Structure probing data (DMS and 2A3) for a 177-nucleotide construct. The 2A3 profile rests on 4,193 reads.
RNA sequence: GGGAACGACUCGAGUAGAGUCGAAAAUUCGGCGACAUCGGCGGCGCCGGCGGCGGCGUGAGCGGACAUCGCGGGUGGACAACGUGCAACUACGUAGUUGCUUCCAACAUGGCUGAUGCGGUGCUGGAAUCGAUUAGCAUUUCGAUGCUAAUCGAUUAAAAGAAACAACAACAACAAC
Reactivity to DMS in 0.01 (KOAc 150mM, MgCl2 10mM, bicine 150mM(pH8.5), 24C), signal-to-noise 5, nucleotides 027 to 126: u010u010c030g020g010c000g010a060c070a090u000c040g010g020c040g020g000c040g020c040c020g010g000c160g010g010c030g000g000c020g010u010g000a090g020c020g010g000a080c090a070u000c040g030c100g000g020g010u000g000g000a080c130a050a060c090g010u010g000c020a040a050c070u000a140c230g020u010a050g010u000u000g010c030u000u000c020c030a030a130c090a050u000g000g010c010u000g000a100u000g020c030g020g030u000g010c020u000g000g000
Reactivity to 2A3 in 0.01 (KOAc 150mM, MgCl2 10mM, bicine 150mM(pH8.5), 24C), signal-to-noise 3, nucleotides 027 to 126: u030u000c030g060g010c010g010a030c040a110u060c040g060g000c050g030g020c020g030c000c000g020g030c040g050g040c030g000g000c030g010u040g040a020g010c040g060g010a050c010a050u070c060g010c010g050g000g000u040g020g010a040c030a100a020c110g050u090g030c020a060a030c040u170a050c110g230u150a060g000u040u010g010c000u050u000c030c020a040a040c030a060u090g110g000c010u030g050a080u110g050c020g080g020u030g010c010u030g010g060
DMS (dimethyl sulfate) methylates the pairing face of unpaired adenines and cytosines.
For DMS, 7,964 sequencing reads were counted.